[RMDB]
RNA sequence: GGGAACGACUCGAGUAGAGUCGAAAAGAAAGAGAGGUUUUUUGCCGUUCUCGAGUGAGUUAAUGUGUUUUAUACACUGUGUAUGAAGCGUAGAAAGAAUACGCUCACGAGAGUACGGCUAAAGAAACCCAACUAAAAAGUUCGCUUUUUAGUUGGGAAAAGAAACAACAACAACAAC
Reactivity to DMS in 0.01 (KOAc 150mM, MgCl2 10mM, bicine 150mM(pH8.5), 24C), signal-to-noise 6, nucleotides 027 to 126: g010a050a040a070g020a080g000a110g000g010u000u000u000u010u010u000g010c010c000g030u010u000c000u000c000g000a300g010u000g000a030g010u000u000a080a090u020g000u010g020u000u010u010u010a050u020a030c000a160c170u030g020u040g030u010a040u000g010a070a030g010c020g010u000a040g000a110a090a090g020a130a070u020a060c140g000c010u020c000a020c000g000a300g000a010g010u000a000c010g000g010c000u000a000a020a040g000a060a070a090
Reactivity to 2A3 in 0.01 (KOAc 150mM, MgCl2 10mM, bicine 150mM(pH8.5), 24C), signal-to-noise 9, nucleotides 027 to 126: g090a020a090a010g150a010g030a060g020g060u050u030u010u020u050u060g010c000c000g000u030u010c000u000c000g000a010g000u000g000a000g000u050u150a130a090u120g050u020g010u030u020u020u030a050u030a000c090a030c120u130g070u120g000u200a020u040g040a030a010g020c020g020u060a040g170a120a150a010g130a060a070u100a080c060g000c000u000c000a000c000g020a030g000a000g010u010a000c000g000g000c000u000a000a000a000g000a000a000a000
This 177-nucleotide RNA was probed chemically with DMS and 2A3. For DMS, 15,754 sequencing reads were counted. Values are in units of 0.01, from 0 to 300, in steps of 10. DMS (dimethyl sulfate) methylates the pairing face of unpaired adenines and cytosines.